[RMDB]
RNA sequence: GGGAACGACUCGAGUAGAGUCGAAAACGCAUAUCGACCAAGUACAAGCCGCCGUGCUCGAGCAUGGUGCUGAUCUGGGACUUGCUCAUGAUGGCGACGCGGAUCGCUGCCUGGCGGUAGAUGCUGACGAACCACGAAACUUCGGUUUCGUGGUUCGAAAAGAAACAACAACAACAAC
Reactivity to 2A3 in 0.01 (KOAc 150mM, MgCl2 10mM, bicine 150mM(pH8.5), 24C), signal-to-noise 1, nucleotides 027 to 126: c000g000c040a000u060a040u110c040g150a160c030c030a100a000g040u020a070c030a110a160g050c010c010g000c010c000g080u080g080c090u130c080g070a050g000c010a020u080g030g000u100g120c020u040g020a170u040c100u110g010g090g000a020c010u020u000g010c000u030c050a010u200g100a070u090g080g000c050g030a010c000g000c030g070g000a100u030c030g000c070u030g060c020c000u040g020g000c010g060g000u010a000g010a030u080g000c000u000g020a060
Reactivity to DMS in 0.01 (KOAc 150mM, MgCl2 10mM, bicine 150mM(pH8.5), 24C), signal-to-noise 1, nucleotides 027 to 126: c150g000c070a080u000a040u010c080g000a140c030c030a020a040g030u000a040c060a090a170g000c010c000g020c000c010g000u000g020c060u000c230g000a060g050c010a030u020g000g000u000g000c000u000g000a070u000c130u000g030g000g010a080c090u000u010g050c050u010c020a160u010g000a100u010g020g000c010g040a030c180g060c110g000g010a150u000c040g000c060u010g000c020c000u010g000g030c000g000g000u000a040g000a160u000g010c010u010g000a220
The record gives the reactivity of an RNA of 177 nucleotides to 2A3 and DMS. DMS adducts were read by reverse transcription with MarathonRT. For 2A3, 938 sequencing reads were counted. Reactivities are rounded to 0.1 and cut off at 0 and 3. For 2A3 the reverse transcriptase was SuperScript II with manganese.